RNA sequence: GGGAACGACUCGAGUAGAGUCGAAAACAGGACCUCAAGUAUGGUGAGGACAGAGUGUCAUGUGAGGCUGUGUCAGAUCAGUCUGUGUCCUGGGACCACCAGAGCAUGUGCCAGUGGUGCAAGAGUGUCAAGACCCCUCAUUCGUGAGGGGUCUUGAAAAAGAAACAACAACAACAAC
Reactivity to 2A3 in 0.01 (KOAc 150mM, MgCl2 10mM, bicine 150mM(pH8.5), 24C), signal-to-noise 2, nucleotides 027 to 126: c040a010g010g000a050c010c000u070c030a030a000g020u070a070u190g200g160u080g050a060g060g060a000c000a000g200a030g000u110g040u080c040a110u300g040u120g190a170g060g000c020u060g000u010g120u120c000a010g030a260u030c000a070g060u010c040u000g080u020g000u020c000c000u000g000g000g030a030c000c000a010c000c000a020g010a020g060c060a080u120g020u100g160c000c000a020g070u010g020g000u010g000c000a000a040g010a000g090u080g050
Reactivity to DMS in 0.01 (KOAc 150mM, MgCl2 10mM, bicine 150mM(pH8.5), 24C), signal-to-noise 2, nucleotides 027 to 126: c020a080g040g010a040c030c040u000c130a090a060g020u000a120u000g000g000u010g000a200g000g010a110c030a010g000a070g030u010g000u000c010a190u040g030u050g000a070g000g000c020u020g000u010g000u000c110a110g000a070u000c030a040g000u000c020u000g000u020g000u000c000c020u000g000g000g000a190c070c020a090c060c070a100g020a140g000c040a090u010g000u020g000c050c000a100g010u050g000g030u000g000c020a090a060g000a110g050u060g020